Description
The record gives the reactivity of an RNA of 177 nucleotides to DMS and 2A3. High DMS reactivity at an A or C suggests that its Watson-Crick edge is free. For DMS, 1,707 sequencing reads were counted. Reactivities are given for positions 27 through 126.
RNA sequence: GGGAACGACUCGAGUAGAGUCGAAAACAGACCGAAAAGGUCACACUCUGGGGCGCGCGACCCGCCCGAGCCAGCGGCCCGCCAGUUACCACCCGCCGACCAAACCCCCGCCUCCACGGAGGGCGGGCGGCACUGAUCAAUUCGUUGAUCAGUGCCGAAAAGAAACAACAACAACAAC
Reactivity to DMS in 0.01 (KOAc 150mM, MgCl2 10mM, bicine 150mM(pH8.5), 24C), signal-to-noise 1, nucleotides 027 to 126: c220a070g000a110c060c000g000a050a040a080a130g000g000u040c020a210c090a040c110u000c010u000g010g000g000g000c030g000c040g000c070g000a010c030c020c000g000c050c000c060g000a080g000c070c050a170g000c070g020g010c010c000c060g030c030c010a050g000u020u010a130c010c000a120c070c010c010g010c030c000g030a150c050c040a080a140a050c000c110c000c000c010g000c000c000u000c010c010a150c100g010g000a180g010g000g000c030g000g010g020
Reactivity to 2A3 in 0.01 (KOAc 150mM, MgCl2 10mM, bicine 150mM(pH8.5), 24C), signal-to-noise 2, nucleotides 027 to 126: c050a000g040a010c010c000g060a090a100a010a210g010g010u010c020a010c000a010c030u080c040u080g020g010g010g000c050g000c000g000c020g050a060c000c000c000g010c010c000c000g020a040g020c010c000a040g020c010g030g030c020c000c000g000c000c010a030g040u060u070a050c010c000a030c040c030c000g030c010c000g030a050c000c020a100a000a110c020c010c020c000c010g000c000c000u050c020c010a070c100g040g000a040g030g020g020c000g000g000g000